Structure probing data (2A3 and DMS) for a 177-nucleotide construct. The data come from the RNA Mapping Database (RMDB), library TTRDES. The RNA was probed in 150 mM KOAc, 10 mM MgCl2 and 150 mM bicine (pH 8.5) at 24 C. For DMS the reverse transcriptase was MarathonRT.
RNA sequence: GGGAACGACUCGAGUAGAGUCGAAAAGAUAUGGACGAGGAGCGACAUGGUGCUGGAUCGGAAACGAUCCACACCAACAGCGCUUUCGUCCUAAGUCAAAAGCGAUUACUCUUCGGAGUAAUCGCAAGAAAGUACCUAUCUUCGGAUAGGUACUUUCAAAAGAAACAACAACAACAAC
Reactivity to 2A3 in 0.01 (KOAc 150mM, MgCl2 10mM, bicine 150mM(pH8.5), 24C), signal-to-noise 3, nucleotides 027 to 126: g000a010u010a000u040g010g000a000c000g010a020g180g050a010g030c010g090a110c190a300u300g000g030u040g010c230u020g040g000a000u000c010g000g000a020a010a000c010g010a000u000c010c000a000c010a000c000c020a020a040c040a030g010c010g000c000u020u040u000c000g000u000c000c010u000a010a010g020u000c010a050a050a080a120g020c010g000a010u000u000a010c000u010c000u030u180c300g160g000a010g000u000a010a010u000c000g010c000a000a010
Reactivity to DMS in 0.01 (KOAc 150mM, MgCl2 10mM, bicine 150mM(pH8.5), 24C), signal-to-noise 3, nucleotides 027 to 126: g000a030u000a100u020g000g000a000c000g010a040g000g000a010g020c000g040a060c190a180u010g010g020u000g000c300u000g020g020a000u000c000g010g000a030a040a060c010g000a010u000c000c000a010c000a000c000c010a050a020c240a150g010c000g020c010u010u000u000c000g010u000c000c000u010a000a040g000u020c010a120a080a190a190g000c000g000a010u000u000a000c000u000c000u000u000c230g000g000a020g000u000a000a000u000c000g000c000a010a020